[RMDB]
RNA sequence: GGGAACGACUCGAGUAGAGUCGAAAAAGAGUCACUUAUUGAUUGCAGCUCAAUUGGAAAUCUUCUGGCACAACAACACCAAAGACUCUGUUUUCUGUUGCAUUAGCUGUGUGCCAUGCUACCACUCCUAACGAGAGCAGUUCGCUGCUCUCGUUAGAAAAGAAACAACAACAACAAC
Reactivity to DMS in 0.01 (KOAc 150mM, MgCl2 10mM, bicine 150mM(pH8.5), 24C), signal-to-noise 3, nucleotides 027 to 126: a020g010a040g010u000c020a130c170u000u020a090u000u010g010a070u000u000g030c110a110g020c190u000c040a050a040u010u010g010g000a080a120a100u020c070u000u010c100u010g000g010c000a080c070a040a060c080a040a060c070a130c160c040a020a060a090g000a050c060u000c040u010g000u000u000u000u000c070u010g030u010u000g010c080a060u000u020a090g010c040u010g020u000g040u000g000c050c010a070u010g020c050u000a100c110c100a080c130u000c070
Reactivity to 2A3 in 0.01 (KOAc 150mM, MgCl2 10mM, bicine 150mM(pH8.5), 24C), signal-to-noise 1, nucleotides 027 to 126: a010g010a030g000u020c010a000c070u180u110a140u110u130g090a080u010u150g080c010a050g030c020u090c030a020a120u070u140g030g020a070a100a050u040c010u110u050c070u140g000g040c040a010c000a060a160c020a000a000c010a010c070c010a060a050a080g010a010c030u010c050u140g080u000u030u040u000c010u060g150u100u090g000c080a120u100u030a030g040c060u020g050u030g000u050g140c000c000a020u040g050c040u050a090c030c010a070c030u060c030